The record gives the reactivity of an RNA of 177 nucleotides to DMS. The reactions ran in a buffer of 150 mM KOAc, 10 mM MgCl2 and 150 mM bicine (pH 8.5), at 24 C. It was measured as part of the RMDB libraries RFM100 and RFMREP.
RNA sequence: GGGAACGACUCGAGUAGAGUCGAAAAGAAAGAAUUUCCAGUUGGAACCUAAUGAUUCAUCAGACUCAGAUAUUUAAGUUAACAGUAUUUGAGUCUGAUGAAUCAUUAGGUUCCAGUCAGAAAUUAAAACGGUAUCACUUUUCGAAGUGAUACCGUUAAAAGAAACAACAACAACAAC
Reactivity to DMS in 0.01 (KOAc 150mM, MgCl2 10mM, bicine 150mM(pH8.5), 24C), signal-to-noise 2, nucleotides 027 to 126: g000a080a160a070g000a040a040u000u000u000c000c060a210g030u010u000g010g000a000a040c010c000u000a000a000u010g000a000u010u000c010a000u000c000a000g010a000c000u000c000a010g000a000u000a000u000u000u010a090a210g020u060u020a100a150c170a020g000u000a000u040u000u000g000a050g010u010c000u000g010a010u000g000a000a000u020c000a000u020u010a000g000g010u000u000c000c000a000g000u000c080a240g010a030a010a000u000u010a040a050